About this RNA:
Structure probing data (2A3 and DMS) for a 207-nucleotide construct.
RNA sequence: GGGAACGACUCGAGUAGAGUCGAAAAAGAUCGAUUACGAUCGAUCAAUGAUGCCCCUCACCCACCUCUGAAGAUCCCAGGUGGGCGAGGGAACGGAGCACGGGAUCACGAGCAGAACGCUGCUCGAAAAAGAACUAGACCUUCGGGUCUAGUUCAACUUUAUCUCUUUGUUCGCAAAGAGAUAAAGAAAAGAAACAACAACAACAAC
Reactivity to 2A3 in 0.01 (KOAc 150mM, MgCl2 10mM, bicine 150mM(pH8.5), 24C), signal-to-noise 4, nucleotides 027 to 156: a000g010a000u010c000g000a000u040u070a060c230g030a010u010c000g000a000u000c000a000a080u180g100a050u190g070c000c010c000c010u000c010a030c000c000c000a000c010c000u040c060u150g100a110a030g010a020u000c020c000c000a000g010g010u000g000g000g000c000g000a000g000g000g020a020a030c120g060g080a090g070c140a090c140g020g010g000a000u010c010a010c050g000a000g000c010a010g030a260a050c190g060c300u020g000c010u000c000g000a010a000a000a000a000g000a000a000c000u010a000g000a000c020c030u020u130c300g120g000g000u000c000u000a000g000u000u000c000a000a000
Reactivity to DMS in 0.01 (KOAc 150mM, MgCl2 10mM, bicine 150mM(pH8.5), 24C), signal-to-noise 1, nucleotides 027 to 156: a100g010a000u000c010g010a030u000u020a090c170g000a060u000c010g000a030u010c020a300a100u010g020a140u010g030c060c000c000c000u000c000a000c000c000c000a000c000c040u000c050u000g000a180a150g010a080u010c010c030c000a050g000g030u000g010g000g000c000g000a050g010g010g000a000a020c080g050g000a110g030c090a060c010g030g000g000a120u020c040a260c000g060a060g000c010a010g000a150a240c300g010c010u000g010c000u050c010g000a000a060a100a200a080g020a010a010c010u000a000g000a070c010c000u000u000c300g090g010g050u000c000u000a000g020u010u010c010a050a050
DMS adducts were read by reverse transcription with MarathonRT. Values are in units of 0.01, from 0 to 300, in steps of 10. Conditions: 150 mM KOAc, 10 mM MgCl2 and 150 mM bicine (pH 8.5), 24 C.